[RMDB]
RNA sequence: GGGAACGACUCGAGUAGAGUCGAAAAUGCGCCCACCCCUGCGCCCCUCCUCCCGCUUACACUUUGAUCUUAUUUGAUCGGAUCGUGACCCCAGCCCCGCCGGGCCGACCCGAAAUGAAAAGCUCUCUGAGUUCGUAAAAUUCGUUUUACGAACUCAAAAAGAAACAACAACAACAAC
Reactivity to DMS in 0.01 (KOAc 150mM, MgCl2 10mM, bicine 150mM(pH8.5), 24C), signal-to-noise 5, nucleotides 027 to 126: u020g010c090g010c020c020c020a160c020c010c020c080u010g000c050g000c010c020c010c020u010c040c020u010c020c010c020g020c080u000u000a090c120a060c080u000u010u010g000a040u000c020u010u020a130u020u020u010g000a150u000c010g010g010a040u010c040g020u020g010a150c020c000c000c070a120g000c040c020c040c030g000c100c060g010g000g000c020c020g000a030c020c000c010g000a050a060a090u020g000a060a060a070a090g020c050u000c020u010c110
Reactivity to 2A3 in 0.01 (KOAc 150mM, MgCl2 10mM, bicine 150mM(pH8.5), 24C), signal-to-noise 6, nucleotides 027 to 126: u090g010c010g010c010c000c000a030c000c000c000c000u020g000c020g010c000c000c000c000u010c010c020u010c000c010c000g030c030u060u090a060c070a030c050u060u090u140g040a050u060c030u030u190a230u210u170u150g050a040u020c010g000g020a030u030c010g030u040g150a240c000c000c000c020a000g030c010c010c000c000g000c010c000g000g000g010c000c000g010a020c000c010c000g030a050a030a040u070g030a010a040a040a040g030c010u010c000u000c040
Structure probing data (DMS and 2A3) for a 177-nucleotide construct.
For 2A3 the reverse transcriptase was SuperScript II with manganese.
DMS adducts were read by reverse transcription with MarathonRT.
The reactions ran in a buffer of 150 mM KOAc, 10 mM MgCl2 and 150 mM bicine (pH 8.5), at 24 C.